[RMDB]
Source: RMDB libraries RFM100 and RFMREP, as collected in RNAgym. This 177-nucleotide RNA was probed chemically with 2A3 and DMS. The RNA was probed in 150 mM KOAc, 10 mM MgCl2 and 150 mM bicine (pH 8.5) at 24 C. For DMS the reverse transcriptase was MarathonRT.
RNA sequence: GGGAACGACUCGAGUAGAGUCGAAAAAGACUAUGGGGGUGGGAACCCUUGUAGUUUUAUACCAUAUGAUUAUUCGCUGUUACACUGCGGCUUUCUCAGGAUUGUCAUGGUGGAUGGCUAAAUUAUACCUAAACUAGUGAUUCGUCACUAGUUUAGGAAAAGAAACAACAACAACAAC
Reactivity to 2A3 in 0.01 (KOAc 150mM, MgCl2 10mM, bicine 150mM(pH8.5), 24C), signal-to-noise 9, nucleotides 027 to 126: a000g010a000c000u000a010u010g010g010g000g000g020u050g040g160g060a090a080c000c000c000u010u010g010u000a000g000u000u000u010u020a050u020a010c000c010a030u040a050u150g110a060u050u140a080u170u130c060g000c010u010g040u030u050a140c020a000c000u010g000c010g010g000c010u010u040u010c050u020c090a140g180g040a020u020u000g010u000c010a010u030g020g000u000g020g000a010u010g010g000c000u010a020a030a010u140u090a070u070a080
Reactivity to DMS in 0.01 (KOAc 150mM, MgCl2 10mM, bicine 150mM(pH8.5), 24C), signal-to-noise 5, nucleotides 027 to 126: a030g000a010c010u000a010u010g000g010g010g000g030u010g020g040g000a190a050c010c000c010u000u000g010u000a000g000u010u000u000u000a070u010a250c010c010a220u010a010u010g000a040u000u010a070u020u000c200g010c000u000g000u000u010a100c020a020c010u010g010c170g000g000c010u000u000u000c010u020c210a150g000g000a020u000u000g020u010c000a020u000g000g020u000g000g000a030u000g000g000c020u010a020a050a040u020u000a030u000a120

As a SHAPE reagent, 2A3 marks flexible, mostly unpaired nucleotides at the ribose 2'-OH.